[RMDB]
RNA sequence: GGGAACGACUCGAGUAGAGUCGAAAAAAAAAGGCACUUCAGGUGGCUCUCGGGCGAAAGUACUGACGACAGACCAGAAGCGGGAAGCCGUUGAGUUUAUGUGUGAUGCGACCGGUCUGUCGAAAAACAUAUUAAUGAACUUCGGUUCAUUAAUAUGAAAAGAAACAACAACAACAAC
Reactivity to DMS in 0.01 (KOAc 150mM, MgCl2 10mM, bicine 150mM(pH8.5), 24C), signal-to-noise 5, nucleotides 027 to 126: a030a060a050a090a060g000g000c020a020c050u000u000c080a060g010g010u000g020g010c030u010c030u000c060g020g010g010c080g000a070a040a030g010u000a080c070u010g010a200c030g000a020c020a020g000a020c020c000a080g020a060a200g000c020g000g000g000a120a170g010c020c020g020u000u000g000a130g010u000u010u000a020u010g000u010g020u000g010a150u010g010c030g010a200c020c040g010g010u000c010u000g010u000c010g000a010a020a050a070a080
Reactivity to 2A3 in 0.01 (KOAc 150mM, MgCl2 10mM, bicine 150mM(pH8.5), 24C), signal-to-noise 3, nucleotides 027 to 126: a000a000a010a000a030g050g010c030a010c020u060u020c040a040g060g020u040g050g000c000u000c020u040c050g060g030g010c050g030a050a020a000g050u070a080c020u040g050a010c020g010a000c010a010g010a000c010c010a010g020a060a000g010c020g010g050g040a060a020g030c010c010g060u060u100g090a140g090u130u240u080a120u080g150u030g030u050g060a060u130g010c010g000a030c010c000g000g010u010c010u010g000u000c000g010a000a020a000a010a000